[RMDB]
RNA sequence: GGGAACGACUCGAGUAGAGUCGAAAAUCAAAAGCCUUACCCAUGGCUGUGGCAUUGUCGCUCAUUUCGAGCAUCUGGUCGAAGAUUCCGGUCAUGGUGCUGUGCAUGGUAAGAAUCAUGGUCCGCACGCUCCCGAUUCCUUCGGGAAUCGGGAGCGAAAAGAAACAACAACAACAAC
Reactivity to 2A3 in 0.01 (KOAc 150mM, MgCl2 10mM, bicine 150mM(pH8.5), 24C), signal-to-noise 1, nucleotides 027 to 126: u170c090a150a060a000a000g070c000c000u010u030a090c040c040c000a000u030g000g030c080u000g000u090g030g000c260a230u000u160g090u040c020g000c000u000c000a130u000u210u090c090g030a090g120c000a000u000c080u030g000g120u160c010g000a180a020g050a220u200u000c050c000g030g000u000c000a040u070g000g010u010g000c000u070g070u070g190c040a150u110g000g000u170a170a130g070a070a140u010c030a000u090g130g000u080c000c000g190c050a050